[RMDB]
RNA sequence: GGGAACGACUCGAGUAGAGUCGAAAACUAUUGCACAAAUUGUUGGCUGGAAUACGGUAUUUAUUGCAUGUUUCAGCCGAGAAUACCAACUAUUCAAACCAUCAAUUAUGAUAGAAGCACACAAGUCGCCAUGCACUCAGUUCGCUGAGUGCAUGGCAAAAGAAACAACAACAACAAC
Reactivity to 2A3 in 0.01 (KOAc 150mM, MgCl2 10mM, bicine 150mM(pH8.5), 24C), signal-to-noise 2, nucleotides 027 to 126: c060u040a030u050u100g000c050a040c010a090a020a040u010u070g040u080u130g010g000c150u170g000g060a000a000u060a170c260g000g000u060a050u000u300u030a150u300u000g010c000a050u000g010u130u000u020c120a020g060c030c000g000a000g000a030a040u160a060c140c030a040a000c190u000a010u050u000c000a030a060a140c110c010a000u030c010a010a130u210u090a180u200g030a010u000a020g000a080a150g000c020a020c000a000c000a040a180g000u020c140